RNA sequence: GGGAACGACUCGAGUAGAGUCGAAAACUCUUGCGGCCUUCAUGCCACGGCGGCCCCGAUAGCGCUCGAUCAGCGGCUCGACGUCGGCCACCUUCAAAUCGGUGGCCUGUAUCAGGGCGUCGACGGCCCAUACGCCGAUCUUCGGAUCGGCGUAUGGAAAAGAAACAACAACAACAAC
Reactivity to DMS in 0.01 (KOAc 150mM, MgCl2 10mM, bicine 150mM(pH8.5), 24C), signal-to-noise 1, nucleotides 027 to 126: c070u000c050u010u000g050c130g000g040c010c080u030u000c130a080u010g010c030c060a120c040g040g010c080g000g010c020c010c010c040g000a060u000a060g020c070g010c080u010c050g010a100u000c090a100g010c070g000g010c150u000c020g020a020c050g020u010c110g000g000c000c000a000c010c000u000u020c180a080a080a070u010c180g000g000u000g000g000c010c000u010g020u010a030u010c130a100g000g000g010c010g030u000c000g000a070c110g000g040c060
Reactivity to 2A3 in 0.01 (KOAc 150mM, MgCl2 10mM, bicine 150mM(pH8.5), 24C), signal-to-noise 1, nucleotides 027 to 126: c010u040c000u020u090g070c010g080g050c050c000u120u070c050a060u110g000c010c010a000c030g000g030c000g050g200c020c000c010c020g000a040u070a070g030c070g010c030u040c020g000a080u060c040a020g160c020g190g000c020u010c030g050a010c030g010u200c050g000g040c000c000a000c010c000u200u250c140a080a060a150u170c050g030g000u030g000g060c040c000u020g010u030a040u090c070a060g050g000g020c010g000u010c000g030a070c080g040g000c000